[RMDB]
RNA sequence: GGGAACGACUCGAGUAGAGUCGAAAAAACACCAUUCUUAUGAGAUUCAACGUUGAAUGGCGUUGCUAGACAUAUGAGCUGAGGAACGACUAUUCGCAUUUUCUUUCAAGGCAAUUAAUUGUAAAUAACAUCAUCGACGGUUCGCCGUCGAUGAUGUAAAAGAAACAACAACAACAAC
Reactivity to 2A3 in 0.01 (KOAc 150mM, MgCl2 10mM, bicine 150mM(pH8.5), 24C), signal-to-noise 2, nucleotides 027 to 126: a000a000c140a120c050c000a130u020u020c050u020u010a080u070g050a130g000a080u100u100c010a140a170c010g190u200u300g260a250a110u020g020g000c000g000u010u000g060c000u000a000g000a000c000a300u110a110u230g220a150g000c000u040g130a000g000g000a090a000c050g160a120c000u000a000u000u000c000g000c040a150u000u000u000u000c000u000u100u160c110a000a000g000g050c120a120a220u070u230a300a000u170u140g160u300a000a140a110u020a040
Chemical mapping of a 177-nucleotide RNA with 2A3. The 2A3 profile rests on 314 reads. For 2A3 the reverse transcriptase was SuperScript II with manganese. Reactivities are given for positions 27 through 126. Source: RMDB library OK1LIB, as collected in RNAgym. As a SHAPE reagent, 2A3 marks flexible, mostly unpaired nucleotides at the ribose 2'-OH.